The record gives the reactivity of an RNA of 177 nucleotides to DMS and 2A3. For DMS the reverse transcriptase was MarathonRT. The RNA was probed in 150 mM KOAc, 10 mM MgCl2 and 150 mM bicine (pH 8.5) at 24 C. It was measured as part of the RMDB library OK1LIB.
RNA sequence: GGGAACGACUCGAGUAGAGUCGAAAAUCUGACACUUCAUUGUCUGCUAGCAGAAUAUGGGAAGAUUUUGAGCUGUGCAGUUCAUUAGGCAUUUAGUGCAUGCCUCCAUGUGUGGGGUGUUGGUGACUACAGAGGUACGCUUCGGCGUACCUCUGUAAAAAGAAACAACAACAACAAC
Reactivity to DMS in 0.01 (KOAc 150mM, MgCl2 10mM, bicine 150mM(pH8.5), 24C), signal-to-noise 1, nucleotides 027 to 126: u030c010u000g020a010c020a020c000u020u000c050a010u040u060g030u030c020u000g030c010u000a070g020c060a130g020a060a050u020a040u000g000g000g000a150a060g000a060u000u000u000u000g020a080g010c000u000g010u040g000c120a010g000u010u020c000a020u000u030a020g030g030c030a050u010u030u040a090g050u010g000c130a060u000g010c030c000u000c160c060a050u000g010u010g000u000g000g000g000g000u000g000u010u000g000g000u000g000a170c070
Reactivity to 2A3 in 0.01 (KOAc 150mM, MgCl2 10mM, bicine 150mM(pH8.5), 24C), signal-to-noise 4, nucleotides 027 to 126: u020c020u020g000a000c000a010c010u040u000c020a060u030u180g120u060c000u000g000c020u060a020g000c010a010g030a130a050u180a080u210g070g010g080a100a070g040a150u010u020u050u120g100a080g000c000u040g040u100g190c020a010g030u080u090c000a010u020u010a010g030g000c000a000u030u000u240a140g030u120g090c030a010u020g000c000c000u010c070c050a130u080g070u000g010u050g050g000g000g010u000g000u020u020g000g010u020g040a020c020